Conditions: 150 mM KOAc, 10 mM MgCl2 and 150 mM bicine (pH 8.5), 24 C.
This 177-nucleotide RNA was probed chemically with 2A3 and DMS.
The data come from the RNA Mapping Database (RMDB), library RFM100.

RNA sequence: GGGAACGACUCGAGUAGAGUCGAAAAUUGCGGAAAUUGGUGUGGGUCGUAUUGUCCCCCCCUCUCCGCCAGAUUGAGGCGAGUAGGUGCGCCAGUGCCGCGUGGGUUUCGCCGGCGGCAUUGGGGGGGGAGCCAAAAGAUUCGUCUUUUGGCUCCCAAAAGAAACAACAACAACAAC
Reactivity to 2A3 in 0.01 (KOAc 150mM, MgCl2 10mM, bicine 150mM(pH8.5), 24C), signal-to-noise 3, nucleotides 027 to 126: u070u060g050c030g010g070a070a060a050u150u100g020g030u110g020u120g060g010g030u060c080g030u080a050u070u190g060u060c020c030c000c020c000c000c000u000c000u010c010c040g000c000c000a090g050a130u180u190g090a040g040g000c010g010a020g040u110a030g040g060u110g050c040g040c020c030a050g010u010g010c000c000g000c050g060u260g010g000g030u170u230u240c140g040c000c000g000g000c000g000g000c040a010u020u000g000g000g000g000g000
Reactivity to DMS in 0.01 (KOAc 150mM, MgCl2 10mM, bicine 150mM(pH8.5), 24C), signal-to-noise 1, nucleotides 027 to 126: u040u000g030c090g000g010a020a130a050u000u010g020g030u000g020u000g000g020g000u000c010g020u020a070u030u000g000u060c030c010c020c060c040c020c000u010c040u000c080c080g000c000c140a070g000a150u050u040g010a190g000g010c030g010a000g010u020a110g010g000u030g030c170g000c030c010a010g000u000g000c000c000g000c010g000u050g000g000g040u000u010u040c220g010c010c010g000g000c020g000g010c030a000u000u000g000g010g000g050g060